[RMDB]
RNA sequence: GGGAACGACUCGAGUAGAGUCGAAAACACUCGAUACCUUCCUGAGGACGGUGGACAUCGACUACGAGACCCUUGCCUCGGUAUGCCGGAAGGUGAAGGCGCGACUCGAAGGUGCCGUGGAGGUGCAAACUCACAACCAGUUCGCUGGUUGUGAGUUAAAAGAAACAACAACAACAAC
Reactivity to DMS in 0.01 (KOAc 150mM, MgCl2 10mM, bicine 150mM(pH8.5), 24C), signal-to-noise 3, nucleotides 027 to 126: c070a090c040u010c050g010a180u010a070c040c020u010u000c010c070u010g000a060g010g020a090c070g010g020u020g020g020a090c120a110u000c010g020a110c170u010a140c060g030a050g000a130c040c020c010u000u010g010c020c000u000c020g020g010u000a070u010g040c100c050g000g010a070a030g040g000u000g020a050a110g010g020c040g000c040g000a060c120u000c070g020a110a130g020g020u000g000c020c020g010u000g010g000a110g000g000u010g020c140a090
Chemical mapping of a 177-nucleotide RNA with DMS. Values cover nucleotides 27 to 126. The RNA was probed in 150 mM KOAc, 10 mM MgCl2 and 150 mM bicine (pH 8.5) at 24 C. The DMS profile rests on 2,275 reads.